An RNA of 207 nucleotides, treated with 2A3 and read out base by base. For 2A3 the reverse transcriptase was SuperScript II with manganese.

RNA sequence: GGGAACGACUCGAGUAGAGUCGAAAAUGGAUAUUCGUAUCCAGCCAUGAUAUGGACCUAUUGUCAGAAAUAUGCCCUCGAAGAACUCGGAAACGAGGGAGAGGGUGUAUUUCUUGGAUUUAUAGGUCCUAAGUCUAGAUACACUCUUCGGAGUGAAGACAAGUUCCAAGUUCGCUUGGAACUUGUCAAAAGAAACAACAACAACAAC
Reactivity to 2A3 in 0.01 (KOAc 150mM, MgCl2 10mM, bicine 150mM(pH8.5), 24C), signal-to-noise 1, nucleotides 027 to 156: u020g000g000a010u020a030u110u160c290g000u030a010u040c000c010a020g080c020c000a220u180g020a040u030a020u100g020g000a000c000c000u000a000u010u010g000u010c000a000g000a000a000a010u010a010u000g010c000c010c010u000c010g200a240a070g000a000a020c000u010c010g030g060a040a080a080c010g010a000g040g000g000a000g000a000g000g070g010u000g000u000a000u000u000u000c000u000u050g000g000a000u020u300u000a000u050a000g000g000u120c000c000u000a000a000g000u000c010u010a010g010a040u100a140c010a000c020u010c000u080u180c300g140g000a010g030u050g060a090a010